Chemical mapping of a 207-nucleotide RNA with 2A3. Conditions: 150 mM KOAc, 10 mM MgCl2 and 150 mM bicine (pH 8.5), 24 C. For 2A3, 854 sequencing reads were counted.
[RMDB]
RNA sequence: GGGAACGACUCGAGUAGAGUCGAAAAGGGACGCCUUUAGAAGAAGAGGCAAGGUGGUAUUCCGGUGUGGGAUACUUGGUAAUAUGUAACGCUAAUUGCAUAAGAUUGUAGGACGGAAUUUACAGUCAAAACGGUCCUGCGUUCGCGCAGGACCGAAGCUUGAUUCAGAGUUCGCUCUGAAUCAAGCAAAAGAAACAACAACAACAAC
Reactivity to 2A3 in 0.01 (KOAc 150mM, MgCl2 10mM, bicine 150mM(pH8.5), 24C), signal-to-noise 1, nucleotides 027 to 156: g000g020g000a000c040g040c010c000u090u050u080a170g030a290a020g040a020a000g010a050g010g020c010a010a000g020g010u050g000g020u000a030u020u000c040c030g000g100u200g020u100g050g030g000a010u030a070c000u020u130g010g040u070a110a110u050a060u120g070u030a070a000c080g020c130u090a110a070u220u010g010c010a020u040a110a010g020a040u030u080g000u030a030g050g050a020c020g040g010a010a010u100u030u050a070c050a020g060u070c020a000a000a120a060c020g000g000u000c010c010u010g000c030g030u020u010c170g000c040g000c070a030g000g000a020c010c000g000a000a000